An RNA of 177 nucleotides, treated with 2A3 and DMS and read out base by base. For 2A3, 1,215 sequencing reads were counted. It was measured as part of the RMDB library M2PK50.
RNA sequence: GGGAACGACUCGAGUAGAGUCGAAAACACUUGGAGUUCGCUCCAAGUGAAACCAUUGCCGAUUGGCAAUAAUACCGCAGGCGGUAAAGCGGAACAAAUAACAAAGCGAAGACUUCGGUCUUCGCAACACGAAUGACCAGUUCGCUGGUCAUUCGUGAAAAGAAACAACAACAACAAC
Reactivity to 2A3 in 0.01 (KOAc 150mM, MgCl2 10mM, bicine 150mM(pH8.5), 24C), signal-to-noise 2, nucleotides 027 to 126: c000a000c000u000u000g000g010a000g000u030u030c080g130c070u000c000c000a000a000g010u000g010a010a010a000c030c020a020u000u010g010c020c020g300a300u050u300g000g000c000a000a000u060a070a000u030a040c000c010g040c040a040g060g090c070g060g030u120a130a070a000g050c000g030g030a000a030c030a040a070a050u220a100a050c070a190a080a010g000c000g000a000a000g000a000c000u010u050c170g030g000u010c000u000u000c010g000c010a000a000
Reactivity to DMS in 0.01 (KOAc 150mM, MgCl2 10mM, bicine 150mM(pH8.5), 24C), signal-to-noise 1, nucleotides 027 to 126: c000a000c000u010u070g000g000a090g010u020u020c230g040c020u040c010c000a000a010g000u000g020a040a050a180c040c010a110u000u000g000c000c020g070a130u010u020g010g020c000a000a000u000a020a080u000a060c010c070g020c060a210g000g020c120g040g060u000a080a070a060g000c000g000g000a210a130c300a040a070a090u000a120a030c180a040a090a210g000c000g010a040a000g010a000c020u000u050c100g010g020u000c000u000u000c010g000c000a000a130